The record gives the reactivity of an RNA of 177 nucleotides to 2A3 and DMS. Values cover nucleotides 27 to 126. DMS (dimethyl sulfate) methylates the pairing face of unpaired adenines and cytosines. 2A3 adducts were read by reverse transcription with SuperScript II with manganese. Reactivities are rounded to 0.1 and cut off at 0 and 3. The DMS profile rests on 1,931 reads.
[RMDB]
RNA sequence: GGGAACGACUCGAGUAGAGUCGAAAAACGGAUCGGCGAAGACGUAGACAAUGACCGGCGCAUCUUUUUUACCGUCGAGGAGCCAGUGGGAUUGUUCCAUCCGUUGCCACAUUUCGCGUCCGGCUGGUGUACCGUGAUGUUUCGACAUCACGGUACAAAAAGAAACAACAACAACAAC
Reactivity to 2A3 in 0.01 (KOAc 150mM, MgCl2 10mM, bicine 150mM(pH8.5), 24C), signal-to-noise 2, nucleotides 027 to 126: a000c000g010g000a080u110c090g000g030c040g060a010a040g050a000c010g040u040a040g080a070c060a110a180u130g050a120c000c000g010g020c020g000c000a070u050c080u000u180u070u050u040u070a130c100c090g000u000c030g030a040g030g030a050g050c010c010a040g060u300g040g020g060a100u070u250g030u240u030c020c000a030u040c000c000g040u030u020g080c040c000a080c000a110u120u270u180c040g010c030g050u040c020c030g010g020c020u070g030g050
Reactivity to DMS in 0.01 (KOAc 150mM, MgCl2 10mM, bicine 150mM(pH8.5), 24C), signal-to-noise 3, nucleotides 027 to 126: a050c040g000g020a040u000c120g030g020c060g020a080a220g010a020c070g010u000a060g000a110c270a020a110u010g000a100c040c010g000g020c030g010c030a120u000c030u040u000u020u000u000u010a090c100c060g000u000c020g000a100g040g020a300g010c010c030a090g010u020g010g000g000a080u000u000g000u000u000c040c000a130u000c030c010g020u000u000g010c020c010a090c250a100u010u000u010c130g020c010g010u010c010c020g000g010c040u010g000g000